An RNA of 177 nucleotides, treated with DMS and read out base by base. The RNA was probed in 150 mM KOAc, 10 mM MgCl2 and 150 mM bicine (pH 8.5) at 24 C. Values are in units of 0.01, from 0 to 300, in steps of 10.
RNA sequence: GGGAACGACUCGAGUAGAGUCGAAAAGAUAUGGAUCGUGUCAACCAGCAGGAAGUCGGAAACGAUGGAAGCUGUGUUGCACGAUCCUAAGUCAAAAGAGGGCGAAUGGUUCGCCAUUCGCCCUCAAGGCUUACGUUAUGUUCGCAUAACGUAAGCCAAAAGAAACAACAACAACAAC
Reactivity to DMS in 0.01 (KOAc 150mM, MgCl2 10mM, bicine 150mM(pH8.5), 24C), signal-to-noise 1, nucleotides 027 to 126: g000a000u020a300u000g000g010a010u010c000g000u000g010u000c010a000a000c000c030a010g000c000a030g000g030a300a190g010u000c000g010g000a270a030a180c000g030a000u030g000g000a270a180g000c010u000g030u010g010u000u000g040c000a000c010g030a000u020c000c010u010a010a040g030u000c030a100a000a110a100g000a020g010g000g000c080g000a020a080u000g030g010u000u050c210g020c000c000a000u000u000c000g040c000c000c000u000c000a000a030